[RMDB]
RNA sequence: GGGAACGACUCGAGUAGAGUCGAAAAUUUUUACACAAGCUCUGAUAACUGUGCAGAGUCGAGAUGCAGCCUGGUACCAGCUGCUGAUGGCACCACUCAGCGAGGAUCAGAGGACAGCACUGCAGGAGGUGUACACACUGGCAGAGCACCGACGGACCCUAUCGUGCCUUUUCGAAGGCACGAUAGGAAAAGAAACAACAACAACAAC
Reactivity to 2A3 in 0.01 (KOAc 150mM, MgCl2 10mM, bicine 150mM(pH8.5), 24C), signal-to-noise 1, nucleotides 027 to 156: u040u020u050u100u220a040c040a010c020a080a010g020c000u000c000u000g070a070u160a300a080c040u060g070u070g090c000a000g010a020g060u010c050g030a170g030a110u070g040c000a010g000c030c060u120g010g010u050a100c010c010a010g020c020u030g000c000u000g010a030u080g000g090c010a040c040c000a010c040u000c020a020g000c070g010a060g030g000a010u020c000a030g010a010g030g030a000c000a040g010c000a010c030u130g050c010a010g000g270a040g060g000u050g110u100a060c050a010c010a040c030u020g000g000c010a000g000a010g020c030a000c000c060g050a020c040g040g000a030c000